[RMDB]
RNA sequence: GGGAACGACUCGAGUAGAGUCGAAAACUCAGGGGCUUCGGCCCCUGAGAAACCCGAUGAAGCGGCACUUAGACAGCUUCAUACAGCUAAGAAAGUGCAUAAAAACGGUAGACUUCGGUCUACCGAACCAUUCAAUUACCUUCGGGUAAUUGAAUGGAAAAGAAACAACAACAACAAC
Reactivity to DMS in 0.01 (KOAc 150mM, MgCl2 10mM, bicine 150mM(pH8.5), 24C), signal-to-noise 1, nucleotides 027 to 126: c010u020c030a010g030g040g020g010c000u010u010c210g000g000c000c030c000c010u010g020a030g020a000a110a150c010c010c000g050a060u010g000a090a020g010c080g000g010c000a010c020u040u000a040g030a130c260a080g010c040u020u020c130a030u030a120c160a120g010c040u000a160a110g000a100a080a010g010u000g010c010a070u020a060a100a060a070a040c000g010g010u000a000g000a030c000u010u010c220g020g000u010c000u000a000c000c000g020a010a030
Reactivity to 2A3 in 0.01 (KOAc 150mM, MgCl2 10mM, bicine 150mM(pH8.5), 24C), signal-to-noise 1, nucleotides 027 to 126: c000u000c010a020g060g000g000g010c020u040u050c160g140g000c000c020c020c040u000g000a010g010a000a000a000c010c010c000g000a100u140g070a030a050g110c140g080g030c060a000c030u000u020a040g060a140c010a040g010c000u010u000c010a000u040a030c060a010g030c010u070a110a020g050a030a030a040g070u020g010c010a030u130a080a130a010a000a000c000g000g000u000a010g000a020c020u020u020c220g070g000u000c000u000a000c000c000g000a000a000
Chemical mapping of a 177-nucleotide RNA with DMS and 2A3. For DMS, 867 sequencing reads were counted.